[RMDB]
RNA sequence: GGGAACGACUCGAGUAGAGUCGAAAACCAAAAUCAUUAUUUGUUUUCAUUCAUCUCAUUGGCCGUGUAGUUCAUGUCUAUGCCUCAUCCCGUUAUGCAUAGGCGCCCGAACAUGAUGGCAACGCUGGUGCAUAAUGAAUUUCGAUUCAUUAUGCACAAAAGAAACAACAACAACAAC
Reactivity to 2A3 in 0.01 (KOAc 150mM, MgCl2 10mM, bicine 150mM(pH8.5), 24C), signal-to-noise 9, nucleotides 027 to 126: c020c000a040a020a020a040u160c070a070u060u220a120u110u120u080g100u020u070u020u030c050a060u070u060c030a100u020c050u020c070a150u100u170g180g000c020c000g010u020g050u110a030g010u000u000c010a020u050g000u000c010u010a000u010g010c010c030u080c030a120u110c020c030c000g100u150u080a060u160g000c000a000u000a000g000g000c010g010c010c060c050g000a000a010c010a010u180g010a000u010g010g010c000a010a020c020g020c100u140g060
Reactivity to DMS in 0.01 (KOAc 150mM, MgCl2 10mM, bicine 150mM(pH8.5), 24C), signal-to-noise 6, nucleotides 027 to 126: c020c010a080a080a110a080u030c130a090u020u020a090u000u010u010g020u000u000u000u010c050a080u010u010c090a070u010c030u010c040a130u020u010g010g010c010c020g010u010g030u010a020g000u000u000c010a120u000g010u000c010u000a020u000g010c000c190u020c130a080u000c030c030c020g000u020u010a070u010g010c010a010u000a030g000g000c010g010c210c150c110g010a020a020c040a010u020g010a030u010g000g000c020a060a040c190g010c120u000g020